[RMDB]
RNA sequence: GGGAACGACUCGAGUAGAGUCGAAAAGCUGAGGGCUAUUGAGGCGCAACAGCAUCUGUUGCAACUCACAGUCUGGGGCAUCAAGCAGCUCCAGGCAAGAGUCCUGGCUGUGGAAAGAUACCUAAAGCCAAAUAAUGGAGUUCGCUCCAUUAUUUGGAAAAGAAACAACAACAACAAC
Reactivity to DMS in 0.01 (KOAc 150mM, MgCl2 10mM, bicine 150mM(pH8.5), 24C), signal-to-noise 5, nucleotides 027 to 126: g010c000u010g000a050g030g010g010c010u000a120u020u000g000a020g020g000c300g010c000a000a010c000a010g010c300a140u000c070u000g030u000u000g010c000a020a230c000u000c000a070c300a150g000u000c000u000g000g010g000g000c010a100u010c170a110a170g000c250a090g000c000u000c000c000a000g010g000c010a100a060g000a040g020u000c000c020u000g000g010c010u000g000u000g010g000a110a070a090g000a150u010a120c010c020u000a040a090a170g000
Reactivity to 2A3 in 0.01 (KOAc 150mM, MgCl2 10mM, bicine 150mM(pH8.5), 24C), signal-to-noise 4, nucleotides 027 to 126: g020c030u190g180a060g000g010g000c000u010a070u070u180g010a010g000g050c010g000c010a000a000c000a010g100c070a150u100c070u090g000u000u000g010c000a000a030c000u010c010a020c030a040g000u000c000u010g000g010g010g010c020a030u130c100a110a100g150c060a020g000c000u000c000c000a000g000g000c030a050a060g080a010g080u000c000c000u000g000g030c010u020g010u060g070g090a190a120a030g090a060u180a150c010c010u060a110a070a020g060
Conditions: 150 mM KOAc, 10 mM MgCl2 and 150 mM bicine (pH 8.5), 24 C. Chemical mapping of a 177-nucleotide RNA with DMS and 2A3. The DMS profile rests on 4,015 reads.